[RMDB]
RNA sequence: GGGAACGACUCGAGUAGAGUCGAAAAAAAACCAAAGAAGGCGGUGUUCUCGUCUCUGGCGGUUUCGAUGGCCGCACUCGGCUUGUGUACUACAGAGAGGACACGAGUGGGAUCGUGGUGACGUUCGAACCCACCGCAAAUUCGUUUGCGGUGGGUUAAAAGAAACAACAACAACAAC
Reactivity to DMS in 0.01 (KOAc 150mM, MgCl2 10mM, bicine 150mM(pH8.5), 24C), signal-to-noise 2, nucleotides 027 to 126: a020a030a090a060c000c020a030a250a080g020a060a030g020g020c030g000g040u010g010u000u000c080u000c020g000u000c000u000c080u010g010g010c220g040g010u000u000u020c070g010a130u010g010g000c010c000g030c050a040c070u000c010g000g030c000u000u000g010u000g010u000a080c050u020a220c150a110g010a150g000a000g020g000a030c010a030c030g020a030g020u030g000g000g000a100u010c080g010u000g010g040u000g000a130c080g000u000u000c030g010